[RMDB]
RNA sequence: GGGAACGACUCGAGUAGAGUCGAAAAGGCCAAGGUGGGCAGAUCACUUGAGGUCAGGAGUUCGAUACCAGCCUGGCCAAAAUGAUGAAACCAUGUCUGUACUAAAAAUACAAAAAUUAGCUGGGCGUGGUGACCGGUGCCUGUAAUCCCAGCUACAACUAUUACUAGCUUUCGAGCUAGUAAUAGUAAAAGAAACAACAACAACAAC
Reactivity to 2A3 in 0.01 (KOAc 150mM, MgCl2 10mM, bicine 150mM(pH8.5), 24C), signal-to-noise 5, nucleotides 027 to 156: g040g010c030c030a030a070g030g030u100g010g060g060c100a040g030a130u040c020a030c100u010u030g040a020g010g020u010c010a010g030g000a040g020u210u300c170g050a060u100a190c020c030a010g080c010c000u000g000g000c000c000a010a000a000a030u050g020a010u010g020a060a020a000c000c000a010u020g010u000c030u050g050u040a120c040u090a060a010a050a050a060u180a080c090a030a120a070a070a120u060u040a020g020c040u090g010g000g000c010g020u010g000g000u010g020a000c010c020g020g040u150g000c000c010u000g050u040a030a020u010c000c010c000a000g010c000u090a050c040a130
Reactivity to DMS in 0.01 (KOAc 150mM, MgCl2 10mM, bicine 150mM(pH8.5), 24C), signal-to-noise 2, nucleotides 027 to 156: g000g000c000c020a090a100g020g040u040g020g000g010c070a090g000a050u000c010a010c030u000u010g010a130g020g000u000c010a040g030g020a180g020u010u000c090g020a160u010a050c080c030a160g000c010c010u010g020g010c000c020a020a040a040a010u000g010a060u000g010a120a130a080c020c010a060u000g020u000c000u010g020u000a050c010u010a000a000a040a100a100u010a300c080a030a090a040a090a190u000u000a000g010c010u000g010g010g000c050g050u000g010g010u000g000a040c020c020g000g010u000g020c010c020u060g010u000a080a090u000c010c010c000a160g000c040u010a030c060a090
The data come from the RNA Mapping Database (RMDB), library OK3TST. This 207-nucleotide RNA was probed chemically with 2A3 and DMS. The DMS profile rests on 5,365 reads. The reactions ran in a buffer of 150 mM KOAc, 10 mM MgCl2 and 150 mM bicine (pH 8.5), at 24 C. 2A3 adducts were read by reverse transcription with SuperScript II with manganese. DMS adducts were read by reverse transcription with MarathonRT.